[RMDB]
The data come from the RNA Mapping Database (RMDB), library M2RFPK. An RNA of 207 nucleotides, treated with 2A3 and read out base by base. The reactions ran in a buffer of 150 mM KOAc, 10 mM MgCl2 and 150 mM bicine (pH 8.5), at 24 C. The 2A3 profile rests on 527 reads. Values cover nucleotides 27 to 156. For 2A3 the reverse transcriptase was SuperScript II with manganese.
RNA sequence: GGGAACGACUCGAGUAGAGUCGAAAAACAUAGGUGGCCUCCUUACGAGGAUGCCACCUAUGAAACACUCUCUAUCAGAAUGAAUUCUUGCUGUAAUAACAGAUAGAGUAGGUUGUUACAGACUAAAAUACGUGUGCAUUCUUCGGAAUGCACACAACCUCAAUUUGGUGUUCGCACCAAAUUGAGGAAAAGAAACAACAACAACAAC
Reactivity to 2A3 in 0.01 (KOAc 150mM, MgCl2 10mM, bicine 150mM(pH8.5), 24C), signal-to-noise 1, nucleotides 027 to 156: a000c000a000u000a000g010g000u000g000g000c000c000u000c040c010u070u040a090c180g080a000g000g000a000u020g000c000c010a000c010c000u000a000u000g000a000a000a000c020a000c010u050c000u020c010u000a020u070c010a060g100a300a100u060g020a050a200u170u090c070u130u220g080c000u020g010u060a010a010u030a020a000c050a040g050a160u030a000g100a020g010u030a070g000g110u080u010g000u010u000a000c050a060g120a170c160u170a010a000a210a000u270a100c160g030u000g000u000g000c010a000u000u010c030u040u000c040g100g000a000a000u000g000c000a000c000a000c000a000a010